[RMDB]
RNA sequence: GGGAACGACUCGAGUAGAGUCGAAAAGUACUUCGAAAGAAGAAUCCAUUCACAGUAAAUCCUCGUCAGUUUCGUCGAUGACGACAGGUAAGUUUCCCUUUCCCUCUCUGCGUUUUAUUUUGCAAGGCAGCGUGAAUAAGUUCGCUUAUUCACGCUGAAAAGAAACAACAACAACAAC
Reactivity to DMS in 0.01 (KOAc 150mM, MgCl2 10mM, bicine 150mM(pH8.5), 24C), signal-to-noise 3, nucleotides 027 to 126: g010u000a110c020u000u000c020g010a150a090a150g000a030a030g020a140a100u010c010c020a090u000u010c080a100c130a090g010u000a050a080a070u000c010c020u000c030g010u000c020a040g010u000u000u000c090g010u000c060g020a130u010g010a020c030g000a040c160a020g000g020u010a060a070g000u000u010u000c010c010c010u000u000u000c020c000c010u000c020u000c030u000g010c060g000u000u000u000u000a090u020u000u000u000g010c080a100a130g000g020
Reactivity to 2A3 in 0.01 (KOAc 150mM, MgCl2 10mM, bicine 150mM(pH8.5), 24C), signal-to-noise 1, nucleotides 027 to 126: g030u020a060c000u010u030c000g090a120a070a050g020a010a060g020a080a060u000c020c000a100u080u050c090a070c020a040g070u090a020a060a100u050c000c000u020c030g020u020c000a060g020u000u090u160c080g090u040c030g080a080u100g050a020c000g030a040c040a000g000g000u040a110a040g000u000u010u020c020c000c000u000u010u040c000c010c000u000c010u000c030u030g020c020g000u000u070u010u010a130u010u120u120u050g030c000a020a020g050g050